Structure probing data (DMS and 2A3) for a 177-nucleotide construct.
High DMS reactivity at an A or C suggests that its Watson-Crick edge is free.
[RMDB]
RNA sequence: GGGAACGACUCGAGUAGAGUCGAAAACCCGAGCGCUGACAUGGGCGCAGAGGCCAGUACUCUUCGGAGUACAGGUUUCAAACGAGGCCUUGAGUGAGAUCGUGAAAGUUCGCCGUCGGGCGAAUGGCUAUUUGCACCAUUUCGAUGGUGCAAAUAGAAAAGAAACAACAACAACAAC
Reactivity to DMS in 0.01 (KOAc 150mM, MgCl2 10mM, bicine 150mM(pH8.5), 24C), signal-to-noise 5, nucleotides 027 to 126: c000c000c000g000a090g000c040g020c010u010g010a120c110a080u010g020g000g010c000g010c040a150g000a020g000g010c000c010a090g010u000a000c000u000c000u000u050c150g010g010a020g010u000a000c010a080g020g010u000u000u000c020a100a100a110c120g010a090g010g010c010c030u000u010g000a130g010u020g000a080g010a080u020c050g000u000g020a100a090a150g010u000u000c010g010c000c010g010u030c220g020g010g000c000g010a010a010u000g010g000
Reactivity to 2A3 in 0.01 (KOAc 150mM, MgCl2 10mM, bicine 150mM(pH8.5), 24C), signal-to-noise 6, nucleotides 027 to 126: c000c000c000g010a070g010c020g000c010u050g030a070c030a190u140g050g010g000c010g000c040a000g010a000g000g010c000c010a020g000u000a000c000u000c000u030u120c240g150g000a000g010u010a000c020a020g000g010u010u040u030c070a090a090a010c060g030a030g070g010c030c000u070u080g040a060g060u080g030a060g020a080u110c040g020u070g110a140a040a020g020u010u010c000g000c010c010g150u220c200g080g010g000c000g000a010a020u020g020g010

Overview:
It was measured as part of the RMDB libraries RFM100 and RFMREP. DMS adducts were read by reverse transcription with MarathonRT. Reactivities are given for positions 27 through 126.